Chemical mapping of a 207-nucleotide RNA with 2A3.
For 2A3 the reverse transcriptase was SuperScript II with manganese.
The data come from the RNA Mapping Database (RMDB), library M2RFPK.
RNA sequence: GGGAACGACUCGAGUAGAGUCGAAAACUCCACGCUGGGUAAUGGACUACGGCGGCGUGUGGCGAACAGGGAUACCGGUAGUCAGUGUCUGGAACAUCCCAAGGGGCGGCGGAGCUAGCACCCCGACAAAACGGGCACAAGUUCGCUUGUGCCCGAACAUAGUCGUUGACUUCGGUCAACGACUAUGAAAAGAAACAACAACAACAAC
Reactivity to 2A3 in 0.01 (KOAc 150mM, MgCl2 10mM, bicine 150mM(pH8.5), 24C), signal-to-noise 1, nucleotides 027 to 156: c040u030c000c000a010c040g020c000u010g000g000g090u080a070a080u140g050g030a050c050u080a060c050g170g000c000g020g040c040g090u050g040u090g020g080c050g020a110a030c030a060g000g000g020a030u030a060c010c000g030g060u070a060g020u050c070a010g170u070g030u060c040u040g000g040a100a120c000a100u030c020c000c030a070a100g000g000g000g000c100g010g030c050g020g060a040g080c040u030a020g000c000a060c000c000c000c020g010a020c030a020a140a050a010c010g000g000g000c010a000c010a000a010g020u100u110c120g000c050u000u000g000u000g000c000c000c010g010a000a000